[RMDB]
RNA sequence: GGGAACGACUCGAGUAGAGUCGAAAAGAUAUGGAAAACAGCAUCGAUCAUAAUGUGUCGGAAACGACAUUAUGGGAGCUGCUUCCUAAGUCAAAGUGUAGUCGACUGUUCGCAGUCGACUACACAACUAACCACGAUACUUCGGUAUCGUGGUUAGAAAAGAAACAACAACAACAAC
Reactivity to 2A3 in 0.01 (KOAc 150mM, MgCl2 10mM, bicine 150mM(pH8.5), 24C), signal-to-noise 2, nucleotides 027 to 126: g020a020u050a000u060g000g000a010a010a000a030c010a000g020c030a260u160c100g260a170u250c050a000u010a020a020u090g180u070g150u220c010g000g060a030a010a020c020g000a000c000a000u000u000a000u010g180g050g010a010g020c010u030g000c010u000u000c010c000u000a070a010g040u020c040a130a070a050g030u010g000u000a010g010u030c000g010a000c010u010g040u080u140c300g000c100a000g010u000c000g000a000c010u000a000c000a000c000a020a000
Reactivity to DMS in 0.01 (KOAc 150mM, MgCl2 10mM, bicine 150mM(pH8.5), 24C), signal-to-noise 2, nucleotides 027 to 126: g000a050u010a190u030g020g030a000a030a050a300c000a020g000c000a210u010c120g000a080u000c000a010u000a000a030u000g000u010g030u010c000g000g000a040a040a120c000g010a070c000a000u000u000a010u010g050g010g010a050g020c000u000g000c180u000u000c000c000u000a050a130g020u000c040a090a090a140g030u000g000u000a010g010u000c000g000a010c010u010g010u000u000c190g000c030a000g010u000c010g020a010c000u000a010c000a000c010a040a140